[RMDB]
RNA sequence: GGGAACGACUCGAGUAGAGUCGAAAAGCUUCUCCCACAGGAAAGCAUGAAGGGAGACACCAGGCAUCUCAAUGGAGAGGAGGACGCCGGCGGGAGGGAAGACUCGAUCCUCGUCAACGGGGCCUGCCUUAGAGAGUAAGUUCGCUUACUCUCUAAGAAAAGAAACAACAACAACAAC
Reactivity to DMS in 0.01 (KOAc 150mM, MgCl2 10mM, bicine 150mM(pH8.5), 24C), signal-to-noise 8, nucleotides 027 to 126: g020c110u010u000c050u010c010c010c050a220c120a120g010g010a100a100a130g010c080a100u010g010a110a110g010g000g000a040g000a060c150a090c110c060a060g000g000c030a080u000c010u010c040a110a170u010g010g000a090g010a090g000g000a070g000g000a070c090g010c080c100g010g010c120g000g000g000a080g010g010g010a090a070g000a080c050u010c050g010a120u000c020c020u000c030g010u010c080a060a110c100g010g000g000g010c050c020u000g000c150
Reactivity to 2A3 in 0.01 (KOAc 150mM, MgCl2 10mM, bicine 150mM(pH8.5), 24C), signal-to-noise 6, nucleotides 027 to 126: g020c030u070u010c010u010c000c020c010a080c040a010g140g060a240a120a050g110c090a110u130g050a100a140g020g010g000a020g010a010c010a020c020c020a020g000g030c010a110u050c060u020c070a060a280u170g060g010a080g000a030g070g000a030g020g010a050c050g070c130c010g050g030c080g020g020g030a060g010g030g010a040a080g030a040c010u020c080g040a080u040c000c010u020c010g110u040c040a070a090c040g010g000g020g000c000c010u030g000c020
This 177-nucleotide RNA was probed chemically with DMS and 2A3. 2A3 adducts were read by reverse transcription with SuperScript II with manganese. For DMS the reverse transcriptase was MarathonRT. It was measured as part of the RMDB library OK2TST. Reactivities are given for positions 27 through 126.